RNA sequence: GGGAACGACUCGAGUAGAGUCGAAAAGUACGCGCACUGAUCGCGCAGGUACGUACGUACGCGCCAGUGCGCGGUACGUACACGAUCGUAUAGCGCGUGGCCACUACUGUGGCCAUCUACGAUCGGCCACGACAUGCUUUUUCGAAAGCAUGUCGUGAAAAGAAACAACAACAACAAC
Reactivity to 2A3 in 0.01 (KOAc 150mM, MgCl2 10mM, bicine 150mM(pH8.5), 24C), signal-to-noise 5, nucleotides 027 to 126: g020u020a010c010g020c000g000c020a010c030u030g040a140u250c050g000c000g000c020a000g140g140u010a010c030g060u080a020c210g010u000a010c020g050c000g000c050c000a020g010u010g030c000g000c000g010g000u000a000c010g010u010a030c080a020c080g000a000u000c000g030u020a070u110a160g180c210g010c060g080u020g000g020c010c000a040c020u300a160c120u220g010u020g000g000c000c000a010u010c010u000a000c010g000a000u010c000g000g020c030
Reactivity to DMS in 0.01 (KOAc 150mM, MgCl2 10mM, bicine 150mM(pH8.5), 24C), signal-to-noise 5, nucleotides 027 to 126: g020u000a030c010g010c000g020c010a060c020u000g000a080u020c090g010c020g030c020a070g030g040u000a030c190g020u000a050c110g010u000a030c000g000c020g010c080c060a030g010u010g000c000g000c000g000g030u000a000c010g010u000a100c160a150c000g010a010u000c000g000u000a030u010a150g060c300g000c190g020u000g000g010c000c000a000c010u010a130c290u020g020u000g000g010c000c000a000u000c030u000a010c030g000a020u000c020g010g000c140